[RMDB]
RNA sequence: GGGAACGACUCGAGUAGAGUCGAAAAUAUGCGUUACGGUAGCAAUGCGGUGACGGCCCGUGUCGUCAGUAAGCGCUACAGUGUGCUUUGCGUGCUCAGUAGGAACGUCGUAGAUUUUGCCAACAGUAAAUUUCUUGGUGUUAUCACUGAUACAUUCAGAUUAUGUCAUGUUCGCAUGACAUAAUCUAAAAGAAACAACAACAACAAC
Reactivity to DMS in 0.01 (KOAc 150mM, MgCl2 10mM, bicine 150mM(pH8.5), 24C), signal-to-noise 2, nucleotides 027 to 156: u000a070u000g030c060g040u010u000a040c040g040g030u000a040g000c020a100a080u000g020c030g000g010u020g000a030c020g060g000c030c090c240g050u000g000u000c010g020u000c030a040g010u000a060a090g020c040g000c000u000a030c010a080g030u000g020u000g000c010u000u000u000g020c010g020u000g000c090u020c000a060g050u000a080g050g020a030a020c020g020u000c020g000u010a040g020a070u000u000u000u000g020c000c010a140a110c120a180g010u000a020a030a080u000u000u000c030u000u000g000g000u000g010u000u000a110u000c080a060c050u000g000a100u000a120c080a220u000u000c050
Reactivity to 2A3 in 0.01 (KOAc 150mM, MgCl2 10mM, bicine 150mM(pH8.5), 24C), signal-to-noise 7, nucleotides 027 to 156: u250a060u080g030c020g040u090u160a040c030g020g050u020a010g020c080a080a090u150g010c030g030g060u060g010a010c000g000g010c030c110c120g130u200g000u040c000g010u000c010a030g090u180a090a040g000c020g000c030u020a030c020a060g030u060g010u020g070c000u080u060u110g070c050g010u050g020c010u010c030a040g020u070a120g030g110a050a020c020g030u020c020g020u060a030g010a090u020u040u020u070g060c050c030a090a020c020a130g030u110a040a090a130u070u100u000c000u020u040g010g000u010g030u060u100a130u110c050a040c090u050g020a040u040a090c040a060u070u130c040
An RNA of 207 nucleotides, treated with DMS and 2A3 and read out base by base. 2A3 adducts were read by reverse transcription with SuperScript II with manganese. The data come from the RNA Mapping Database (RMDB), library OK3TST. For DMS the reverse transcriptase was MarathonRT. For DMS, 6,171 sequencing reads were counted. Values are in units of 0.01, from 0 to 300, in steps of 10. The 2A3 profile rests on 5,165 reads.